Notes
Chemical mapping of a 177-nucleotide RNA with 2A3 and DMS. Reactivities are given for positions 27 through 126. The RNA was probed in 150 mM KOAc, 10 mM MgCl2 and 150 mM bicine (pH 8.5) at 24 C. The data come from the RNA Mapping Database (RMDB), libraries RFM100 and RFMREP.
RNA sequence: GGGAACGACUCGAGUAGAGUCGAAAACCAUGGAAUAAGGAGCGUUUAGGGGCCAGGUUAUUAAGCGACGAGGGGUGAAAUCUGGUGACUCGCUUAGGAGCAACAGAGGCGAAAGCGCUGGCCAGGAACGAGAUAGUAGGUUCGCCUACUAUCUCGUAAAAGAAACAACAACAACAAC
Reactivity to 2A3 in 0.01 (KOAc 150mM, MgCl2 10mM, bicine 150mM(pH8.5), 24C), signal-to-noise 2, nucleotides 027 to 126: c000c000a040u070g060g090a120a100u140a230a100g050g040a030g030c030g000u050u060u140a080g030g000g110g000c030c020a000g000g020u000u040a080u110u050a050a020g070c010g030a040c010g010a070g000g000g010g000u060g040a010a030a040u030c010u000g130g030u050g090a060c000u000c010g010c010u020u030a040g060g030a070g040c000a020a100c020a070g090a030g070g000c010g040a080a000a000g030c040g000c040u010g040g000c010c000a020g050g030a050
Reactivity to DMS in 0.01 (KOAc 150mM, MgCl2 10mM, bicine 150mM(pH8.5), 24C), signal-to-noise 5, nucleotides 027 to 126: c010c000a150u020g010g020a070a070u020a100a070g000g010a050g000c050g000u000u010u010a090g020g000g000g010c020c030a060g000g010u010u010a040u020u010a020a060g000c030g010a030c040g010a050g000g020g000g000u000g010a080a120a110u040c010u000g000g000u020g000a080c300u010c010g000c100u010u030a030g010g000a050g010c050a060a080c180a050g000a100g010g000c010g020a060a060a080g010c030g010c010u000g010g010c010c010a080g000g010a120